This 177-nucleotide RNA was probed chemically with 2A3 and DMS.
For 2A3, 780 sequencing reads were counted.
2A3 adducts were read by reverse transcription with SuperScript II with manganese.
The data come from the RNA Mapping Database (RMDB), library OK2TRN.
For DMS the reverse transcriptase was MarathonRT.
RNA sequence: GGGAACGACUCGAGUAGAGUCGAAAAACGGUCAGGAGAACAGAGCAACAGGUAAUGAUCUUCAGAGAGGGAGAAAUGCUCAUCCAAUAGAAUCAUUGAGAAAGGAACCUGCUUUCACAGCUAAAGCGUACCUGGACUAUUUCGAUAGUCCAGGUACAAAAGAAACAACAACAACAAC
Reactivity to 2A3 in 0.01 (KOAc 150mM, MgCl2 10mM, bicine 150mM(pH8.5), 24C), signal-to-noise 1, nucleotides 027 to 126: a000c080g030g030u020c020a000g010g060a100g040a100a040c040a030g060a070g070c000a020a060c020a030g050g040u160a130a080u150g070a010u020c000u050u020c020a030g100a020g020a040g130g000g000a020g050a010a080a010u050g020c020u010c050a060u030c020c000a060a000u130a050g140a080a000u090c050a020u020u100g020a040g110a090a020a000g060g010a020a010c000c010u020g000c020u030u080u010c110a110c020a050g050c110u180a150a080a020g080c030
Reactivity to DMS in 0.01 (KOAc 150mM, MgCl2 10mM, bicine 150mM(pH8.5), 24C), signal-to-noise 1, nucleotides 027 to 126: a060c060g010g030u000c020a060g020g000a080g010a080a070c090a020g020a030g010c040a050a100c060a030g000g000u000a080a070u000g000a050u000c000u000u000c070a090g000a100g000a120g000g000g010a030g010a050a070a060u000g000c030u010c070a180u010c030c050a070a090u010a060g010a070a060u000c090a080u030u010g000a050g020a030a090a110g000g000a060a070c020c050u000g010c060u000u000u010c020a060c040a090g010c120u010a070a060a020g010c170